This 207-nucleotide RNA was probed chemically with DMS and 2A3. DMS adducts were read by reverse transcription with MarathonRT. The reactions ran in a buffer of 150 mM KOAc, 10 mM MgCl2 and 150 mM bicine (pH 8.5), at 24 C. It was measured as part of the RMDB library OK3TST.
[RMDB]
RNA sequence: GGGAACGACUCGAGUAGAGUCGAAAAGCCUCCUAAUGCGCUGGAAUUAGAGGCAUGAACCACUGCACCAGGCCAACAGACAAUUAUGUGUGUUAUCGUUUUGGGGUUACUAAGUCAUAGUGGAGUGAAUGCAGCUUUGAGGAUGCUCAGGCAAUGCACUGAGCUAAAUCUUCGGAUUUAGCUCAGUAAAAGAAACAACAACAACAAC
Reactivity to DMS in 0.01 (KOAc 150mM, MgCl2 10mM, bicine 150mM(pH8.5), 24C), signal-to-noise 4, nucleotides 027 to 156: g010c030c010u020c040c060u000a040a030u010g010c020g030c070u000g030g010a190a080u000u000a050g020a060g030g020c010a100u010g000a080a160c030c030a080c050u000g010c030a120c040c040a100g020g020c020c040a070a090c040a080g000a080c060a070a180u000u020a090u000g020u010g020u010g020u000u000a070u010c080g010u010u000u000u000g010g020g010g010u000u000a080c080u000a050a100g020u010c050a090u010a080g020u000g010g010a090g030u010g010a060a020u000g000c040a050g000c030u000u000u000g010a110g020g030a110u000g020c030u000c040a080g010g020c030a040a070u000g020c090
Reactivity to 2A3 in 0.01 (KOAc 150mM, MgCl2 10mM, bicine 150mM(pH8.5), 24C), signal-to-noise 4, nucleotides 027 to 156: g010c000c000u020c010c060u060a060a010u050g020c050g020c080u060g030g070a030a020u040u020a030g010a020g020g000c010a010u070g050a040a030c000c010a030c060u070g020c030a050c030c020a040g020g040c040c020a050a040c020a030g070a040c020a040a160u250u080a140u220g080u010g020u000g030u080u070a110u130c090g030u030u040u080u090g010g000g000g000u020u030a060c040u080a070a090g020u090c030a080u090a070g030u050g050g030a050g020u060g040a070a060u090g010c020a020g010c000u100u080u100g020a030g040g020a050u080g030c020u020c060a020g040g000c020a020a030u080g040c050